[RMDB]
RNA sequence: GGGAACGACUCGAGUAGAGUCGAAAAGAGGAGUCAUUCGUGACUCCUCAAAGGGAGCUCAACUCUCCCGCUCAAGUCCGAGAGCCUUCGGACCCAAAAGAAUGCUGUUCCUGUUCGCAGGAACAAAGUGUACGAGAACAUUCGUGUUCUCGUACACAAAAGAAACAACAACAACAAC
Reactivity to 2A3 in 0.01 (KOAc 150mM, MgCl2 10mM, bicine 150mM(pH8.5), 24C), signal-to-noise 2, nucleotides 027 to 126: g000a000g000g000a000g020u020c020a020u080u050c110g070u070g000a000c000u000c000c010u000c010a000a000a000g000g000g000a010g000c030u050c200a030a070c040u020c010u020c090c000c000g000c010u040c030a080a010g000u000c010c010g010a010g010a060g210c040c020u020u020c010g000g000a000c020c020c010a070a080a020a030g150a060a070u180g070c050u030g060u010u010c000c020u000g020u020u030c240g020c060a010g010g030a000a000c010a030a000a040
Reactivity to DMS in 0.01 (KOAc 150mM, MgCl2 10mM, bicine 150mM(pH8.5), 24C), signal-to-noise 2, nucleotides 027 to 126: g000a030g010g010a020g030u000c000a050u000u030c120g010u020g000a030c000u010c010c010u010c010a010a050a010g000g000g000a030g000c200u000c300a100a150c270u010c010u010c000c090c000g000c080u000c010a080a150g000u000c010c010g010a070g010a070g000c090c090u000u020c010g000g020a070c000c080c060a120a050a080a050g000a110a110u010g030c190u020g020u010u000c000c000u000g000u010u040c230g000c000a030g000g000a000a000c010a010a020a070